[RMDB]
RNA sequence: GGGAACGACUCGAGUAGAGUCGAAAACGCUGGGACGUGGUGCAGACUCAACAGCCACUGAAGCGCGCACGGUGGACAUGAGUCGGCACGUAACAUCGUCCUGUGCUGAAGCGCGCACGGCAACCGAAAGGUGCGGAAUUGUCUGUUCGCAGACAAAUAAAAUCAAACAUUUCGAUGUUUGAUUUUAAAAAGAAACAACAACAACAAC
Reactivity to 2A3 in 0.01 (KOAc 150mM, MgCl2 10mM, bicine 150mM(pH8.5), 24C), signal-to-noise 8, nucleotides 027 to 156: c030g000c010u030g000g000g010a000c010g010u030g030g020u010g020c010a010g010a000c000u010c030a170a120c080a220g020c000c000a000c000u020g040a220a030g010c000g000c010g000c010a010c020g010g020u000g000g020a090c160a300u300g000a060g000u000c000g000g010c000a000c010g020u100a040a020c050a150u250c010g000u010c000c000u010g010u000g000c010u040g020a160a060g000c010g000c000g000c010a000c000g020g000c010a030a030c010c000g050a100a040a020g020g010u020g000c010g010g040a140a190u090u040g000u000c010u000g020u060u110c260g020c090a000g020a000c010a000a020a000
Reactivity to DMS in 0.01 (KOAc 150mM, MgCl2 10mM, bicine 150mM(pH8.5), 24C), signal-to-noise 5, nucleotides 027 to 156: c020g000c010u000g020g010g020a040c020g050u000g020g020u000g030c000a040g010a050c000u000c000a140a120c100a160g020c010c010a020c010u000g010a050a070g030c010g020c010g050c020a300c030g000g030u000g010g020a060c040a140u000g010a040g020u000c000g000g010c010a010c010g000u010a060a070c100a060u000c020g010u000c000c010u010g020u000g010c010u000g000a080a080g020c040g040c020g010c010a300c080g000g000c020a070a070c010c010g010a130a090a140g020g020u000g010c000g010g000a120a110u000u000g010u000c010u000g000u000u000c260g030c040a060g000a090c060a040a050a260
Chemical mapping of a 207-nucleotide RNA with 2A3 and DMS. For DMS the reverse transcriptase was MarathonRT. Source: RMDB library RNAMAK, as collected in RNAgym. Reactivities are given for positions 27 through 156. The reactions ran in a buffer of 150 mM KOAc, 10 mM MgCl2 and 150 mM bicine (pH 8.5), at 24 C.